[RMDB]
RNA sequence: GGGAACGACUCGAGUAGAGUCGAAAAGACCUUCAGUUCGCUGAAGGUCGAUGAUGGUAAGAGAGAUUACCAUCUGUUAAGUGAAAUGGAUAAGAUCUCUCAGUGAACGUGCUUUCGAGCACGUUAACACCUGCUAAAAGUUCGCUUUUAGCAGGUGAAAAGAAACAACAACAACAAC
Reactivity to 2A3 in 0.01 (KOAc 150mM, MgCl2 10mM, bicine 150mM(pH8.5), 24C), signal-to-noise 5, nucleotides 027 to 126: g000a000c000c000u010u010c010a030g000u040u100c150g010c080u000g000a010a000g000g000u000c000g000a010u010g000a000u010g010g060u050a140a020g010a000g010a000g010a020u010u010a020c020c000a010u000c010u020g110u090u140a190a170g090u060g290a060a040a080u210g080g060a070u060a150a090g020a050u020c000u000c000u000c010a010g050u030g180a010a000c010g000u000g000c000u010u060u100c160g010a010g000c000a010c000g000u000u000a000a000
Reactivity to DMS in 0.01 (KOAc 150mM, MgCl2 10mM, bicine 150mM(pH8.5), 24C), signal-to-noise 5, nucleotides 027 to 126: g000a010c000c000u000u000c000a000g020u000u010c230g030c010u000g010a020a010g000g010u000c000g000a030u000g000a080u010g000g010u000a040a180g000a030g010a020g000a020u000u000a040c030c030a010u000c000u000g010u000u000a070a130g010u010g000a070a060a070u010g000g000a110u010a050a070g010a040u000c010u000c000u000c020a250g010u010g000a040a010c000g010u000g000c010u000u000u020c180g010a020g010c000a000c000g010u000u000a040a170

An RNA of 177 nucleotides, treated with 2A3 and DMS and read out base by base.
The data come from the RNA Mapping Database (RMDB), library M2PK50.
In probing experiments dimethyl sulfate is read out at A N1 and C N3, which are open when not base-paired.
For DMS the reverse transcriptase was MarathonRT.
Values are in units of 0.01, from 0 to 300, in steps of 10.
Conditions: 150 mM KOAc, 10 mM MgCl2 and 150 mM bicine (pH 8.5), 24 C.
For DMS, 7,714 sequencing reads were counted.